Record summary: Source: RMDB library OK2TST, as collected in RNAgym. This 177-nucleotide RNA was probed chemically with 2A3 and DMS. DMS adducts were read by reverse transcription with MarathonRT. The reactions ran in a buffer of 150 mM KOAc, 10 mM MgCl2 and 150 mM bicine (pH 8.5), at 24 C. Values are in units of 0.01, from 0 to 300, in steps of 10.
[RMDB]
RNA sequence: GGGAACGACUCGAGUAGAGUCGAAAACACUUUGCAAGGAAAUCUCGUGCCACUGCCUGAGCCUCAAGGCGAGCUCACCUUACAAGUGCGCGAUAUUCAGUAUCAAGAUCAACGAAUUGAUACUGUAACGUAGGUACCACUUCGGUGGUACCUACGUAAAAGAAACAACAACAACAAC
Reactivity to 2A3 in 0.01 (KOAc 150mM, MgCl2 10mM, bicine 150mM(pH8.5), 24C), signal-to-noise 2, nucleotides 027 to 126: c020a010c010u120u120u130g000c040a030a020g050g040a050a020a060u040c020u010c010g060u070g130c060c030a070c030u080g080c000c040u030g010a050g040c020c010u050c110a070a110g140g010c020g020a010g000c010u010c020a060c020c020u030u050a040c010a080a010g020u040g030c070g000c010g080a020u060a100u150u040c000a020g000u000a030u010c010a040a010g010a210u200c030a080a160c060g110a050a080u000u000g000a000u000a010c000u000g020u020a030
Reactivity to DMS in 0.01 (KOAc 150mM, MgCl2 10mM, bicine 150mM(pH8.5), 24C), signal-to-noise 2, nucleotides 027 to 126: c060a030c110u000u000u050g030c030a030a060g000g000a020a110a070u010c010u010c040g010u000g020c040c050a110c030u000g000c070c050u020g020a110g000c070c010u000c120a120a100g000g020c040g000a050g000c120u000c050a100c020c000u000u010a030c030a020a100g000u000g000c100g010c170g000a100u010a040u000u000c010a000g020u000a000u000c000a000a000g000a140u000c130a080a120c300g000a070a120u000u000g030a040u000a000c010u000g000u000a160